[RMDB]
RNA sequence: GGGAACGACUCGAGUAGAGUCGAAAAUAGCUCUCUCUUGUGCUUCUUCAAUCAUCUGAGCAGCCUGGCUUUGCGCAGAGCUUACGAUUGAAUUUGCUUGAGCCUGAGCCGUGCGCAAGCGCCUCUCCAGGUGCGAGUGCUUCGGCACUCGCACCUGAAAAGAAACAACAACAACAAC
Reactivity to 2A3 in 0.01 (KOAc 150mM, MgCl2 10mM, bicine 150mM(pH8.5), 24C), signal-to-noise 1, nucleotides 027 to 126: u200a000g010c000u050c010u000c000u000c010u020u040g060u070g110c020u060u000c040u100u070c020a000a000u080c030a050u060c110u040g080a030g010c010a000g010c010c060u080g050g020c010u060u020u250g090c130g030c110a000g020a000g040c000u050u130a010c120g040a020u160u120g000a110a190u010u000u090g070c000u020u010g050a040g010c000c050u080g000a000g000c020c000g070u040g000c020g000c030a020a020g030c000g050c030c000u010c000u000c000
The data come from the RNA Mapping Database (RMDB), library OK1LIB. This 177-nucleotide RNA was probed chemically with 2A3. For 2A3, 598 sequencing reads were counted. The reactions ran in a buffer of 150 mM KOAc, 10 mM MgCl2 and 150 mM bicine (pH 8.5), at 24 C. For 2A3 the reverse transcriptase was SuperScript II with manganese. Reactivities are given for positions 27 through 126.